[RMDB]
The data come from the RNA Mapping Database (RMDB), library OK1LIB. This 177-nucleotide RNA was probed chemically with DMS and 2A3. The reactions ran in a buffer of 150 mM KOAc, 10 mM MgCl2 and 150 mM bicine (pH 8.5), at 24 C. For DMS the reverse transcriptase was MarathonRT.

RNA sequence: GGGAACGACUCGAGUAGAGUCGAAAAUGACAGCGGAUAGGCGCGAAAGCGUCUAUUUAUUAGCAAUGACUGUAUGCUAAUAGACUAUUGUGAAAACAAUAGUUUGCUGUCUAACAGUCAUUGAUACGAUCUACUCUAAUUUCGAUUGGGGUAGAUCAAAAGAAACAACAACAACAAC
Reactivity to DMS in 0.01 (KOAc 150mM, MgCl2 10mM, bicine 150mM(pH8.5), 24C), signal-to-noise 6, nucleotides 027 to 126: u010g000a010c000a000g020c010g000g010a000u000a000g000g000c000g000c000g010a090a110a180g000c000g020u000c000u000a000u000u000u000a000u000u000a010g000c010a060a120u010g000a000c000u000g010u000a140u000g010c000u000a000a010u000a010g000a000c000u000a000u010u000g000u000g010a140a060a150a020c000a000a010u000a000g000u000u000u000g010c000u000g010u000c000u010a090a070c000a000g000u000c010a140u030u030g020a130u040a070c200
Reactivity to 2A3 in 0.01 (KOAc 150mM, MgCl2 10mM, bicine 150mM(pH8.5), 24C), signal-to-noise 5, nucleotides 027 to 126: u020g000a000c000a000g000c000g000g000a000u000a000g000g000c000g000c000g010a060a080a010g000c000g000u000c000u000a000u000u000u000a000u000u000a000g000c010a010a020u050g000a000c000u000g000u000a000u050g000c000u000a000a000u000a000g000a000c000u000a000u000u000g010u000g080a040a020a010a010c000a000a000u000a000g000u000u000u010g000c000u000g000u000c000u000a010a000c000a000g000u000c000a010u030u260g050a030u030a050c070